[RMDB]
RNA sequence: GGGAACGACUCGAGUAGAGUCGAAAACUUCGCAACUUCGGUUGCGAAGAAUGGCAGCUCGUCCCGGCGCUGGGUUCGCCGCGUUAUAAAACAUAACACAUCACUGGCUACCAUUCGUGGUAGCCAAAUGACGAUAAAUUUUCGAAUUUAUCGUCAUAAAAGAAACAACAACAACAAC
Reactivity to DMS in 0.01 (KOAc 150mM, MgCl2 10mM, bicine 150mM(pH8.5), 24C), signal-to-noise 7, nucleotides 027 to 126: c000u000u000c000g010c000a010a000c000u000u020c180g040g010u000u000g010c000g000a000a000g010a040a070u010g010g010c050a060g010c020u010c050g010u010c020c010c010g010g030c070g020c070u010g000g000g010u000u000c080g020c030c030g020c130g010u000u000a030u010a060a070a090a100c190a050u010a020a030c060a110c170a090u010c140a090c210u000g000g010c000u000a010c010c000a050u000u010c200g020u000g000g000u000a000g010c000c000a000a010
Reactivity to 2A3 in 0.01 (KOAc 150mM, MgCl2 10mM, bicine 150mM(pH8.5), 24C), signal-to-noise 3, nucleotides 027 to 126: c000u010u010c000g000c000a010a000c000u030u070c150g140g000u000u000g000c000g000a000a000g000a000a000u020g010g010c010a010g010c010u010c020g050u050c010c020c020g110g300c040g040c080u130g050g000g000u050u070c050g000c010c000g030c040g010u020u020a090u040a040a210a010a000c060a020u060a050a010c040a000c000a090u120c020a030c150u050g000g000c010u000a000c000c010a000u040u060c180g040u010g000g000u000a000g010c000c000a000a000
Background: The record gives the reactivity of an RNA of 177 nucleotides to DMS and 2A3. Reactivities are given for positions 27 through 126. For 2A3 the reverse transcriptase was SuperScript II with manganese. For 2A3, 7,569 sequencing reads were counted. High 2A3 reactivity points to a flexible backbone, as in loops and unpaired stretches. The reactions ran in a buffer of 150 mM KOAc, 10 mM MgCl2 and 150 mM bicine (pH 8.5), at 24 C.